[RMDB]
RNA sequence: GGGAACGACUCGAGUAGAGUCGAAAAGGUAUCCACUUCGGUGGAUACCAAAGGCGAUCCCAGCAUCAGGCAACAACAACAAUAGAUGCAUCCCUAACGCCAAAAUUCCGGAUUUCGAUCCGGAAAACCAUUAACUUCUGUUCGCAGAAGUUAAUGGAAAAGAAACAACAACAACAAC
Reactivity to 2A3 in 0.01 (KOAc 150mM, MgCl2 10mM, bicine 150mM(pH8.5), 24C), signal-to-noise 3, nucleotides 027 to 126: g010g000u000a000u010c000c000a000c010u050u060c200g100g000u000g010g000a000u000a000c000c000a020a030a010g000g000c010g000a040u050c010c000c000a000g000c010a010u020c030a010g190g050c080a110a050c020a050a020c010a020a010c020a110a240u080a210g020a020u010g000c010a060u040c010c010c000u030a070a010c010g010c000c000a070a070a000a060u060u000c010c000g000g000a000u050u050u140c180g050a010u030c000c000g000g000a010a000a000a010
Reactivity to DMS in 0.01 (KOAc 150mM, MgCl2 10mM, bicine 150mM(pH8.5), 24C), signal-to-noise 3, nucleotides 027 to 126: g000g030u000a000u000c000c010a000c000u010u030c180g040g020u010g000g000a000u000a000c020c010a030a030a090g020g000c050g010a160u020c000c000c020a190g000c020a050u000c020a130g010g010c140a070a060c080a050a070c130a060a060c090a080a090u020a070g010a050u000g000c010a090u000c000c020c000u000a300a150c040g000c040c030a080a090a090a190u000u000c000c000g020g000a010u000u000u020c200g000a020u000c000c000g000g000a000a000a050a130